[RMDB]
An RNA of 177 nucleotides, treated with DMS and 2A3 and read out base by base. The DMS profile rests on 2,630 reads. The RNA was probed in 150 mM KOAc, 10 mM MgCl2 and 150 mM bicine (pH 8.5) at 24 C.
RNA sequence: GGGAACGACUCGAGUAGAGUCGAAAAGAUAUGGAUCAUUAUGGACAUGCUGGAGUUCGGAAACGAACUCUCAGCAACAGCCAUGAAUGAUCCUAAGUCAAAACUGCGCUUCUUCGGAAGCGCAGAAUCCUAUGCUAUCCUUCGGGAUAGCAUAGGAAAAAGAAACAACAACAACAAC
Reactivity to DMS in 0.01 (KOAc 150mM, MgCl2 10mM, bicine 150mM(pH8.5), 24C), signal-to-noise 2, nucleotides 027 to 126: g000a020u000a150u010g000g000a020u000c000a010u000u000a010u000g010g000a080c100a130u010g000c000u000g020g000a050g010u000u000c000g020g010a010a020a070c000g010a000a020c000u000c000u030c000a000g010c000a050a030c250a230g000c010c000a020u000g000a040a010u000g010a030u000c000c000u000a000a080g010u000c000a120a090a100a180c010u000g000c010g000c000u000u000c000u000u010c240g030g020a010a000g020c010g020c000a000g000a020a060
Reactivity to 2A3 in 0.01 (KOAc 150mM, MgCl2 10mM, bicine 150mM(pH8.5), 24C), signal-to-noise 1, nucleotides 027 to 126: g010a010u020a000u080g000g010a000u010c020a000u000u020a010u000g040g020a070c070a240u270g000c010u010g030g020a020g000u000u000c000g000g000a020a000a000c000g000a000a000c020u010c010u050c010a010g030c000a000a030c060a070g030c010c000a020u070g240a030a040u010g010a000u030c000c000u000a000a010g010u000c000a000a000a200a220c000u000g020c000g000c000u000u020c000u050u080c300g190g000a000a000g000c000g020c000a000g000a000a010